[RMDB]
RNA sequence: GGGAACGACUCGAGUAGAGUCGAAAAGAUUUGGCGUUGGCGCUGUUACUCGAUGUGCAACAAGGUCUGCGUGAUGACCUUAAACUGCUGAUUAUGUCGGCUACCCUGGACAACGACCGCUUGCAGCGUCGAUUUACUAUUUCGAUAGUAAAUCGACAAAAGAAACAACAACAACAAC
Reactivity to DMS in 0.01 (KOAc 150mM, MgCl2 10mM, bicine 150mM(pH8.5), 24C), signal-to-noise 8, nucleotides 027 to 126: g010a130u010u000u000g020g020c060g020u010u010g010g010c050g010c040u000g000u000u000a060c050u000c060g010a060u010g020u000g010c040a060a080c180a030a030g000g010u000c010u000g010c210g020u010g010a080u010g010a030c010c000u000u000a030a080a140c130u000g010c010u000g000a090u000u000a080u010g010u000c020g010g000c060u000a080c050c020c030u000g000g000a070c050a040a070c070g000a100c070c040g010c070u000u000g020c100a100g000c140
Reactivity to 2A3 in 0.01 (KOAc 150mM, MgCl2 10mM, bicine 150mM(pH8.5), 24C), signal-to-noise 7, nucleotides 027 to 126: g060a070u080u100u220g020g000c040g020u040u100g050g020c030g000c060u030g070u090u060a050c020u030c050g060a060u080g050u050g130c050a050a030c020a080a040g000g000u000c020u050g040c080g150u130g070a110u120g010a020c010c000u000u010a080a100a020c040u030g000c010u010g030a080u050u170a100u300g060u040c010g000g000c020u040a070c000c010c010u040g030g010a010c010a040a010c040g040a070c000c010g040c040u040u090g040c050a060g020c010

The record gives the reactivity of an RNA of 177 nucleotides to DMS and 2A3.
High 2A3 reactivity points to a flexible backbone, as in loops and unpaired stretches.
The data come from the RNA Mapping Database (RMDB), library OK2TST.
Conditions: 150 mM KOAc, 10 mM MgCl2 and 150 mM bicine (pH 8.5), 24 C.
The DMS profile rests on 15,545 reads.